[RMDB]
RNA sequence: GGGAACGACUCGAGUAGAGUCGAAAACGGAGGCGAUGAUCACCACCGCGCCGCGUAACGCGUUGCCAUGCGGCGGGGCCAGCAGGGCGGCGACACUACGGCCGAUGAACGUACCGCCGUAGCGGUCCUUCCAUUGGGGAUUCGUCCCCAAUGGAAGAAAAGAAACAACAACAACAAC
Reactivity to DMS in 0.01 (KOAc 150mM, MgCl2 10mM, bicine 150mM(pH8.5), 24C), signal-to-noise 5, nucleotides 027 to 126: c070g000g000a090g000g000c030g000a090u010g020a090u030c060a110c090c030a120c060c020g010c050g010c010c010g010c060g000u000a070a160c150g010c040g030u020u010g010c040c050a090u030g000c050g000g040c010g010g010g000g000c030c040a090g000c070a040g010g010g000c050g000g020c070g000a050c040a100c040u010a040c020g000g000c020c050g030a100u030g010a120a070c170g010u010a110c080c180g010c010c030g010u000a030g000c070g010g010u000c110
Reactivity to 2A3 in 0.01 (KOAc 150mM, MgCl2 10mM, bicine 150mM(pH8.5), 24C), signal-to-noise 9, nucleotides 027 to 126: c040g040g010a030g010g030c040g050a090u090g030a060u120c040a020c060c010a030c010c030g060c000g010c010c000g020c010g030u080a110a030c060g030c030g140u080u120g030c030c010a050u100g000c010g010g000c020g030g020g000g000c010c000a030g020c020a020g050g040g000c010g000g010c000g020a030c030a010c060u080a020c010g030g000c050c020g040a070u130g090a110a030c060g040u110a050c010c020g000c000c010g010u010a010g020c070g040g010u020c020